[RMDB]
An RNA of 177 nucleotides, treated with 2A3 and DMS and read out base by base. Reactivities are given for positions 27 through 126. For 2A3, 2,957 sequencing reads were counted. It was measured as part of the RMDB library TTRDES.
RNA sequence: GGGAACGACUCGAGUAGAGUCGAAAAGAUAUGGAAGGCUAGUCGUAUGAACUACGAAGGCUCUUCGGAAACGAAGAGAUCUUCGCAUACGAGGCCUUCCUAAGUCAAAUCCCAGUUCGCUGGGAAAGGAAUUUGAUAUCUUCGGAUAUCAAAUUCCAAAAGAAACAACAACAACAAC
Reactivity to 2A3 in 0.01 (KOAc 150mM, MgCl2 10mM, bicine 150mM(pH8.5), 24C), signal-to-noise 2, nucleotides 027 to 126: g020a030u060a020u190g010g000a000a020g000g020c040u120a120g300u130c010g010u000a040u020g030a130a190c120u130a080c300g010a000a000g040g000c010u000c000u030u000c020g000g020a070a080a030c040g000a010a000g020a010g000a080u050c000u010u000c000g040c000a000u010a000c000g030a000g010g000c000c000u000u000c000c000u010a000a010g000u000c020a020a050a220u050c000c000c000a010g000u060u050c300g000c150u000g000g060g000a060a080a090
Reactivity to DMS in 0.01 (KOAc 150mM, MgCl2 10mM, bicine 150mM(pH8.5), 24C), signal-to-noise 2, nucleotides 027 to 126: g010a030u020a300u030g000g000a020a000g010g020c010u000a090g050u000c000g010u000a000u000g030a080a110c120u020a300c040g020a010a010g000g000c000u000c000u000u000c010g000g000a120a110a250c010g010a000a000g020a010g000a050u020c000u000u000c000g010c010a000u000a020c000g020a030g000g000c010c000u010u000c000c000u000a000a070g020u000c020a120a180a200u010c000c000c000a040g000u000u010c300g030c010u000g000g000g020a050a050a100